[RMDB]
An RNA of 177 nucleotides, treated with 2A3 and read out base by base. The reactions ran in a buffer of 150 mM KOAc, 10 mM MgCl2 and 150 mM bicine (pH 8.5), at 24 C. 2A3 adducts were read by reverse transcription with SuperScript II with manganese. 2A3 is a SHAPE reagent: it acylates the 2'-hydroxyl of flexible nucleotides of all four kinds.
RNA sequence: GGGAACGACUCGAGUAGAGUCGAAAAAAGGAGCAAUACGCCAAGUCCAGCGCCGAUCUCGCACGGCGCGGUGUUACGGCCCAGGCCGCUACGCUGGCGGCCGGCGUGGAGGCGAUCGGGCCGUCGGGUCAACCAGCCCAUUCGUGGGCUGGUUGACAAAAGAAACAACAACAACAAC
Reactivity to 2A3 in 0.01 (KOAc 150mM, MgCl2 10mM, bicine 150mM(pH8.5), 24C), signal-to-noise 2, nucleotides 027 to 126: a000a000g240g010a170g050c160a120a040u080a180c050g000c030c000a070a030g050u090c030c030a030g040c000g000c030c000g020a150u050c050u100c200g070c010a000c110g000g000c040g000c040g000g000u040g020u000u150a000c050g000g000c000c010c000a030g000g000c000c000g030c010u060a070c000g030c080u120g090g020c000g050g030c030c000g000g000c010g000u000g000g030a030g000g010c000g080a190u170c100g010g000g000c000c000g010u030c000g020g000